[RMDB]
The record gives the reactivity of an RNA of 207 nucleotides to 2A3. It was measured as part of the RMDB library RNAMAK. For 2A3 the reverse transcriptase was SuperScript II with manganese. The reactions ran in a buffer of 150 mM KOAc, 10 mM MgCl2 and 150 mM bicine (pH 8.5), at 24 C.
RNA sequence: GGGAACGACUCGAGUAGAGUCGAAAAGCGUACUACUGAGCAGGCGGAUACAGGGAGCUCUAUAACACAAAUAUCCCAAAUAGGAUAUUUGGGAAAGUAGAGCGAAGAACUGUAUGCCAUGCUCAGUAUCGCAAAGCCAAGGGUUCGCCCUUGGCAACCCUAGUUCAGUGUUCGCACUGAACUAGGGAAAAGAAACAACAACAACAAC
Reactivity to 2A3 in 0.01 (KOAc 150mM, MgCl2 10mM, bicine 150mM(pH8.5), 24C), signal-to-noise 1, nucleotides 027 to 156: g000c000g020u040a070c050u000a000c000u040g000a000g000c000a010g030g010c030g070g120a050u010a050c000a000g040g000g010a050g000c000u000c030u030a100u000a090a070c100a000c000a100a000a000u000a010u020c030c010c030a170a290a060u200a080g000g000a000u000a000u000u000u010g000g100g030a000a110a000g020u130a010g000a000g020c000g020a050a040g030a020a010c000u000g000u010a000u010g090c000c000a100u030g000c000u000c000a000g000u000a010u000c000g000c000a030a100a000g000c010c000a000a000g100g000g030u040u220c300g190c020c010c000u010u020g000g020c000a000a000